[RMDB]
RNA sequence: GGGAACGACUCGAGUAGAGUCGAAAAGAAAACAAGUACCGAGAACAUUGUUUUCGCUGCUUGGCGUUGCCGUUUUGUGUUGCAGUUGGUUGGGUAACGCCGCAAAUACCAACAGCAGAGACAGAUAACGUCACCUAUUAUUCGUAAUAGGUGACGUAAAAGAAACAACAACAACAAC
Reactivity to 2A3 in 0.01 (KOAc 150mM, MgCl2 10mM, bicine 150mM(pH8.5), 24C), signal-to-noise 6, nucleotides 027 to 126: g010a000a010a000a010c010a000a000g030u040a040c050c050g020a020g030a060a030c120a300u170u240g000u010u000u000u000c020g010c020u010g000c010u040u040g000g000c010g000u000u010g020c020c000g050u020u030u170u230g180u040g070u070u080g000c030a040g000u000u040g020g050u050u160g070g010g000u010a000a000c010g000c030c000g010c020a050a090a020u230a020c000c020a010a000c000a020g000c010a000g030a000g040a130c030a060g060a080u120a180
Reactivity to DMS in 0.01 (KOAc 150mM, MgCl2 10mM, bicine 150mM(pH8.5), 24C), signal-to-noise 4, nucleotides 027 to 126: g000a100a040a190a150c020a030a020g020u010a020c270c010g010a070g000a020a020c050a170u000u030g010u000u010u000u000c000g000c210u010g010c000u000u000g000g010c010g000u000u000g010c010c020g000u020u010u000u020g030u000g010u020u010g030c020a080g020u000u000g010g000u010u010g000g020g010u000a040a050c160g010c000c020g010c110a010a060a070u040a050c000c010a010a010c020a030g010c030a060g000a190g030a060c070a060g000a160u030a090

Chemical mapping of a 177-nucleotide RNA with 2A3 and DMS. 2A3 adducts were read by reverse transcription with SuperScript II with manganese. DMS adducts were read by reverse transcription with MarathonRT. The RNA was probed in 150 mM KOAc, 10 mM MgCl2 and 150 mM bicine (pH 8.5) at 24 C.